[RMDB]
RNA sequence: GGGAACGACUCGAGUAGAGUCGAAAAUUUUAUUUCUGUUUAUCAUGGGCUGCAGAAAUGGGAAGGAUUAGAAAGCACGCUAAAGAUGGUUAGAAGGGUGUCAUUAUUUUCCUAUUUUCACCCUGUGUCUGAAGAUAACAUUCGUGUUAUCUUCAGAAAAAGAAACAACAACAACAAC
Reactivity to DMS in 0.01 (KOAc 150mM, MgCl2 10mM, bicine 150mM(pH8.5), 24C), signal-to-noise 7, nucleotides 027 to 126: u010u010u010u010a060u010u010u000c010u000g010u000u000u000a090u030c060a070u010g010g010g010c150u000g010c090a050g000a020a020a020u010g000g000g010a080a040g010g010a070u000u000a060g000a120a120a190g010c020a020c060g010c040u000a040a110a140g000a090u010g010g010u000u010a080g010a130a050g010g010g020u000g010u000c040a050u000u000a100u000u000u000u000c010c010u000a130u000u000u000u000c070a080c060c010c020u000g020u010g010
Reactivity to 2A3 in 0.01 (KOAc 150mM, MgCl2 10mM, bicine 150mM(pH8.5), 24C), signal-to-noise 4, nucleotides 027 to 126: u030u040u030u070a040u010u050u010c000u020g080u040u160u070a120u090c030a030u070g060g060g000c040u060g000c030a010g020a050a030a020u020g010g000g020a030a030g030g010a010u010u050a050g060a040a050a020g010c000a000c050g060c050u030a030a070a080g080a120u110g080g100u130u070a060g040a120a020g080g030g000u020g000u010c010a020u010u110a050u030u050u010u010c010c000u010a060u020u050u010u040c040a040c010c000c020u030g030u010g020
The data come from the RNA Mapping Database (RMDB), library OK2TST. Structure probing data (DMS and 2A3) for a 177-nucleotide construct. For 2A3, 4,914 sequencing reads were counted. DMS adducts were read by reverse transcription with MarathonRT. 2A3 adducts were read by reverse transcription with SuperScript II with manganese.